Structure probing data (DMS and 2A3) for a 207-nucleotide construct.
RNA sequence: GGGAACGACUCGAGUAGAGUCGAAAAACGAGGAUUCGUCCUCGUAAAAAACCUUUGUGCAGGGAAACUAAGCAGGGUGCCAGUACCCAUUGGGUACGGUCAUACCCUGAACUACUUAGUCCCUGCACUCUGGUAAAAAGCGCUCUUCGGAGCGCAAUAGUAUCACAGUAUUCGUACUGUGAUACUAAAAAGAAACAACAACAACAAC
Reactivity to DMS in 0.01 (KOAc 150mM, MgCl2 10mM, bicine 150mM(pH8.5), 24C), signal-to-noise 2, nucleotides 027 to 156: a050c000g000a020g050g010a070u000u000c300g010u000c010c000u000c000g000u000a000a080a090a060a060a030c000c000u000u000u000g010u000g010c000a020g000g000g000a150a090a050c000u000a020a030g020c000a060g020g040g050u000g000c030c020a190g030u010a020c020c000c000a300u010u010g050g020g010u010a000c010g010g040u000c050a150u000a060c000c000c000u000g000a040a130c050u000a140c020u000u000a020g000u000c000c000c000u000g000c020a000c000u000c000u010g000g000u010a040a050a050a100a130g010c000g010c010u000c020u000u000c280g000g000a030g030c010g040c000a000a020
Reactivity to 2A3 in 0.01 (KOAc 150mM, MgCl2 10mM, bicine 150mM(pH8.5), 24C), signal-to-noise 4, nucleotides 027 to 156: a000c000g000a000g000g000a010u070u060c180g080u020c040c020u000c010g000u020a000a000a030a010a010a010c000c000u010u010u010g000u000g000c010a000g020g010g020a210a210a110c010u000a000a000g010c000a000g000g000g000u010g020c030c080a110g010u030a010c010c010c110a260u240u300g000g000g000u000a000c000g010g000u020c040a100u160a110c000c000c000u000g010a000a020c020u060a020c000u010u010a010g040u060c010c000c000u000g000c000a000c000u000c000u000g000g010u060a050a030a000a090a000g010c000g000c000u000c000u020u100c250g110g000a000g000c000g000c000a000a000
For DMS, 5,017 sequencing reads were counted. For DMS the reverse transcriptase was MarathonRT. Source: RMDB library RNAMAK, as collected in RNAgym. For 2A3, 4,450 sequencing reads were counted.